[RMDB]
RNA sequence: GGGAACGACUCGAGUAGAGUCGAAAAGUCAGCCAGAACUGCAGAGUGAGACCCUGUUGUUUGUUUGUUUGUUUGAGACGGGGUUUCUCUGUGUAGCCCUGGCUAUCGAGGCACGUGUUCGCACGUGGCGUGAUAUAGUCUUCGGACUAUAUCACGCAAAAGAAACAACAACAACAAC
Reactivity to 2A3 in 0.01 (KOAc 150mM, MgCl2 10mM, bicine 150mM(pH8.5), 24C), signal-to-noise 4, nucleotides 027 to 126: g050u040c030a000g000c000c000a000g000a030a030c000u000g000c000a000g010a000g100u010g000a000g000a000c000c000c030u000g020u030u010g050u050u090u120g130u110u120u130g160u100u180u100g190u080u120u210g070a050g000a000c000g000g000g000g000u000u010u000c000u000c000u000g140u000g000u000a000g000c020c010c000u000g000g010c000u000a030u080c060g040a080g070g070c010a000c010g000u010g010u080u100c210g020c070a010c000g000u000g060
Reactivity to DMS in 0.01 (KOAc 150mM, MgCl2 10mM, bicine 150mM(pH8.5), 24C), signal-to-noise 3, nucleotides 027 to 126: g010u010c130a030g010c010c010a010g010a040a060c010u000g010c000a010g010a020g010u000g010a030g010a020c010c000c000u010g010u010u010g010u010u000u000g010u010u000u000g010u000u010u010g010u000u010u000g000a220g000a010c010g000g010g020g010u000u000u000c000u000c000u000g000u000g010u000a010g010c040c030c000u000g000g010c010u000a020u010c070g000a140g010g020c010a000c010g020u000g000u000u010c210g010c010a010c010g020u000g010